[RMDB]
RNA sequence: GGGAACGACUCGAGUAGAGUCGAAAAGUGUCUGUCUGACAGUGUGUGAGACUGAGUCACUCUGACUCUCACACUCAGUGUGAGACUGUGAGUGACUCACACAGAGUCAGAGACACAGUCUCACUCAACCAUCUUCUCUUUUCGAAGAGAAGAUGGUAAAAGAAACAACAACAACAAC
Reactivity to DMS in 0.01 (KOAc 150mM, MgCl2 10mM, bicine 150mM(pH8.5), 24C), signal-to-noise 9, nucleotides 027 to 126: g010u000g000u000c010u000g010u000c010u000g000a030c010a120g020u010g000u000g010u000g000a090g000a160c300u010g010a100g000u000c030a040c030u000c010u000g000a090c300u000c000u000c010a010c020a020c020u010c180a130g010u000g020u000g000a010g000a050c140u000g000u010g000a030g010u000g000a050c010u000c010a010c020a010c030a040g010a260g000u000c000a010g000a050g000a030c000a010c000a060g010u000c010u000c000a120c170u010c150a160
Reactivity to 2A3 in 0.01 (KOAc 150mM, MgCl2 10mM, bicine 150mM(pH8.5), 24C), signal-to-noise 9, nucleotides 027 to 126: g010u010g010u010c030u040g170u030c010u010g020a010c010a120g110u040g020u000g010u020g150a090g040a100c140u160g060a030g070u020c000a010c020u000c010u020g060a070c010u000c000u000c010a010c000a010c020u150c100a220g010u000g000u000g010a010g010a020c080u130g050u040g120a010g010u010g010a010c010u000c010a000c000a000c000a000g160a010g010u000c000a000g000a010g000a020c000a000c000a010g010u000c000u000c010a040c030u140c030a030
The record gives the reactivity of an RNA of 177 nucleotides to DMS and 2A3.
2A3 adducts were read by reverse transcription with SuperScript II with manganese.